Overview:
Structure probing data (2A3 and DMS) for a 177-nucleotide construct. Reactivities are given for positions 27 through 126. It was measured as part of the RMDB library OK1LIB. The reactions ran in a buffer of 150 mM KOAc, 10 mM MgCl2 and 150 mM bicine (pH 8.5), at 24 C. For DMS the reverse transcriptase was MarathonRT.
RNA sequence: GGGAACGACUCGAGUAGAGUCGAAAAGUAUGUUCUCCGCACGUCAGAAGAUGGCCGAACAGCCUCAACUGGACGUGCCGGCGAUCAACGAGCAAGUCCGUGGUGCUCUAUUGAUGCACUCUGCAAGCGGAAGCUAUUAUUUCGAUAAUAGCUUCCGAAAAGAAACAACAACAACAAC
Reactivity to 2A3 in 0.01 (KOAc 150mM, MgCl2 10mM, bicine 150mM(pH8.5), 24C), signal-to-noise 9, nucleotides 027 to 126: g080u080a150u290g010u020u000c020u000c010c000g000c000a010c000g010u010c020a010g010a050a020g020a170u250g000g000c010c020g110a130a070c100a070g000c010c000u020c020a060a080c020u070g090g080a040c010g000u000g000c000c010g010g000c020g010a020u020c020a020a030c030g030a020g090c050a100a010g070u020c030c020g070u140g030g000u020g010c010u000c010u080a200u050u260g060a080u120g010c020a010c020u050c050u060g030c050a100a070g080
Reactivity to DMS in 0.01 (KOAc 150mM, MgCl2 10mM, bicine 150mM(pH8.5), 24C), signal-to-noise 7, nucleotides 027 to 126: g020u040a060u020g010u000u000c000u000c010c040g000c010a040c020g010u000c020a030g000a050a300g010a040u040g010g000c000c030g010a110a140c300a230g020c000c010u000c050a070a290c010u000g000g000a010c010g020u000g010c070c080g010g020c060g000a040u000c020a050a070c190g020a100g000c080a060a110g000u010c020c020g010u000g010g000u000g010c010u000c030u020a120u010u020g000a050u030g000c000a030c040u000c060u020g010c140a060a100g010